Description: An RNA of 307 nucleotides, treated with DMS and 2A3 and read out base by base. Reactivities are given for positions 27 through 266.
[RMDB]
RNA sequence: GGGAACGACUCGAGUAGAGUCGAAAAGCAACUGGCAUGGCCCGAGCCAUGGCCGCCGCGUGGCCGCUGCUGCUGGUGGCGCUACUGGUGCUGUCCUGGCCACCCCCAGGAACCGGGGACGUCGUCGUGCAGGCGCCCACCCAGGUGCCCGGCUUCUUGGGCGACUCCGUGACGCUGCCCUGCUACCUACAGGUGCCCAACAUGGAGGUGACGCAUGUGUCACAGCUGACUUGGGCGCGGCAUGGUGAAUCUGGCAGCAUGGCCGUCGAGACGCAUUCGUGCGUCUCAAAAGAAACAACAACAACAAC
Reactivity to DMS in 0.01 (KOAc 150mM, MgCl2 10mM, bicine 150mM(pH8.5), 24C), signal-to-noise 6, nucleotides 027 to 266: g020c020a100a100c210u030g010g000c020a040u000g000g000c020c210c240g020a140g000c010c010a040u000g010g020c020c030g020c100c060g010c300g020u010g000g010c070c030g020c140u000g000c020u000g000c020u010g010g020u000g000g000c020g010c070u010a070c080u000g010g020u010g020c120u010g000u000c010c010u000g000g010c070c080a120c160c120c120c010c010a060g000g010a070a060c060c010g010g000g000g010a110c050g010u010c020g010u010c030g010u010g010c070a140g000g000c020g000c130c030c040a080c170c060c080a140g010g010u000g000c030c020c080g010g000c130u000u000c080u020u000g010g000g010c030g000a130c040u000c020c010g010u000g010a060c080g000c040u010g010c060c020c080u010g010c050u010a060c060c030u000a170c070a060g000g020u010g010c000c070c010a050a090c140a130u000g000g010a040g000g010u000g000a020c010g010c250a110u010g010u020g000u000c000a010c010a060g020c010u000g000a140c290u000u000g010g000g010c020g010c000g000g010c010a040u010g000g000u010g010a110a090u010c070u010g000g010c010a020g000c000a030u010g010g010c010c010g020u010c100
Reactivity to 2A3 in 0.01 (KOAc 150mM, MgCl2 10mM, bicine 150mM(pH8.5), 24C), signal-to-noise 2, nucleotides 027 to 266: g010c000a000a090c060u110g000g000c000a020u010g020g000c010c080c170g070a070g000c000c000a020u030g080g030c010c020g030c040c020g060c030g030u080g010g000c030c000g020c110u030g000c010u010g000c000u020g010g010u000g010g000c000g000c020u100a070c020u050g020g010u030g050c070u080g060u040c000c000u010g000g000c060c020a040c000c010c000c000c000a000g010g020a010a000c000c010g000g000g000g020a030c020g010u070c000g010u010c000g010u050g060c030a020g100g000c000g000c030c010c000a050c010c020c010a040g020g030u020g020c000c000c000g020g000c040u080u030c010u090u090g010g010g000c000g030a020c010u000c010c000g010u000g000a000c010g010c050u020g020c010c000c000u000g020c010u060a050c000c000u020a040c010a020g000g020u030g010c010c000c000a000a010c000a030u100g020g030a020g030g030u010g000a000c000g060c100a160u130g140u070g000u090c000a000c000a000g050c020u020g020a070c010u010u020g000g000g000c000g000c000g000g000c010a010u020g000g000u030g010a050a080u050c010u030g000g000c000a010g000c000a010u040g020g000c010c010g010u040c050

The data come from the RNA Mapping Database (RMDB), library POS240. For 2A3 the reverse transcriptase was SuperScript II with manganese. For DMS, 16,686 sequencing reads were counted.